[RMDB]
RNA sequence: GGGAACGACUCGAGUAGAGUCGAAAAUUAAACAUGGUUACCAAAACCUAAGGCACAAGGUAGCCAUCAAGUGCCUUAGUUAAAUAAAAGCUGAGCGUUAGGAAAAACCUAAUGCUCAGCAAAAAAAGGUUAAAUCUUAGUUCGCUAAGAUUUAACCAAAAGAAACAACAACAACAAC
Reactivity to DMS in 0.01 (KOAc 150mM, MgCl2 10mM, bicine 150mM(pH8.5), 24C), signal-to-noise 1, nucleotides 027 to 126: u000u000a050a060a130c130a070u000g000g010u010u000a190c000c010a180a070a060a080c230c020u010a030a010g000g010c000a060c020a060a300g040g020u000a080g010c140c040a000u010c020a050a300g000u000g000c010c000u000u010a020g020u010u000a010a040a040u010a030a050a050a140g000c000u000g010a000g010c010g010u000u000a030g000g000a050a140a100a100a150c000c000u000a000a000u000g000c000u000c000a010g000c000a000a010a010a070a040a000a030